[RMDB]
RNA sequence: GGGAACGACUCGAGUAGAGUCGAAAAACUGCGUAGACCUAAUUGCGUUGGUCCGCGUAGACUCCAGAGAGCGAUUAGGUAUAGAUUAACGCUAAUAAGCCCGACGUCAUGAGCGAGCGGAGCACCACCGAUCACGGUGAUUCGUCACCGUGAUCGGAAAAGAAACAACAACAACAAC
Reactivity to 2A3 in 0.01 (KOAc 150mM, MgCl2 10mM, bicine 150mM(pH8.5), 24C), signal-to-noise 1, nucleotides 027 to 126: a000c040u020g000c050g040u040a020g000a040c000c000u000a000a120u050u060g010c060g100u040u120g000g030u040c050c020g090c060g000u120a060g050a080c050u080c120c020a010g080a000g030a040g210c000g020a040u000u070a000g000g080u140a040u060a080g130a040u170u230a070a030c020g010c020u000a050a140u040a190a000g060c050c050c000g000a020c000g000u170c080a180u190g050a110g010c040g040a050g050c040g010g040a030g010c000a050c000c000a060
Reactivity to DMS in 0.01 (KOAc 150mM, MgCl2 10mM, bicine 150mM(pH8.5), 24C), signal-to-noise 1, nucleotides 027 to 126: a110c220u000g000c000g030u000a140g000a030c000c000u000a020a000u000u000g030c110g000u020u010g020g000u000c020c070g020c110g050u000a020g000a180c050u000c020c010a150g050a130g000a120g000c020g010a070u010u000a000g010g060u000a180u000a100g020a150u000u030a040a100c020g020c020u000a090a120u000a150a150g000c030c000c010g020a080c020g000u010c140a100u000g000a180g000c000g000a180g000c010g000g020a160g000c000a080c070c080a160
Source information:
Structure probing data (2A3 and DMS) for a 177-nucleotide construct. The 2A3 profile rests on 642 reads. Conditions: 150 mM KOAc, 10 mM MgCl2 and 150 mM bicine (pH 8.5), 24 C. For DMS, 596 sequencing reads were counted. For DMS the reverse transcriptase was MarathonRT.